[RMDB]
RNA sequence: GGGAACGACUCGAGUAGAGUCGAAAACUAUGUCGUUCGCGACAUAGAAAAAGAUAUGGAUCACGUCUGGUAGGGAGCACAUAUAUCGGAAACGAUAUAGUGCUUUGAUCUACCAGAGCGUGAUCCUAAGUCAAAAAACCGCUAUUCGUAGCGGUAACAACGUUGAUCAGUUCGCUGAUCAACGUUGAAAAGAAACAACAACAACAAC
Reactivity to DMS in 0.01 (KOAc 150mM, MgCl2 10mM, bicine 150mM(pH8.5), 24C), signal-to-noise 2, nucleotides 027 to 156: c000u000a000u000g000u000c000g000u000u000c250g010c000g010a020c000a000u000a000g000a030a080a090a140a150g000a110u000a290u000g020g010a000u000c000a000c020g020u010c000u000g000g020u000a010g000g000g000a020g040c000a010c010a090u000a020u000a010u010c000g010g020a190a110a280c010g010a010u000a000u000a040g030u000g000c010u000u000u000g010a070u010c010u000a010c000c010a000g000a030g040c020g050u000g010a000u000c000c000u000a000a100g020u000c010a000a050a060a040a080a040c000c010g030c000u000a050u000u000c260g000u000a010g000c000g010g010u000a010a050
Reactivity to 2A3 in 0.01 (KOAc 150mM, MgCl2 10mM, bicine 150mM(pH8.5), 24C), signal-to-noise 4, nucleotides 027 to 156: c000u000a000u000g010u010c010g010u030u080c300g010c020g130a000c000a000u000a000g120a050a110a020a010a000g060a020u090a040u100g010g000a000u000c000a010c000g030u000c000u000g010g010u000a000g030g010g030a000g010c020a000c050a060u020a000u000a000u000c010g070g020a110a080a020c030g000a000u000a000u000a000g000u000g020c010u020u050u010g020a010u010c000u000a010c000c000a000g000a000g000c000g000u000g000a000u000c000c000u000a000a000g000u000c010a000a010a010a030a090a080c010c000g000c000u020a050u040u110c290g130u050a000g010c000g000g000u010a010a010
Structure probing data (DMS and 2A3) for a 207-nucleotide construct. For DMS the reverse transcriptase was MarathonRT. The reactions ran in a buffer of 150 mM KOAc, 10 mM MgCl2 and 150 mM bicine (pH 8.5), at 24 C. For 2A3 the reverse transcriptase was SuperScript II with manganese. The DMS profile rests on 5,752 reads. 2A3 is a SHAPE reagent: it acylates the 2'-hydroxyl of flexible nucleotides of all four kinds. For 2A3, 7,172 sequencing reads were counted.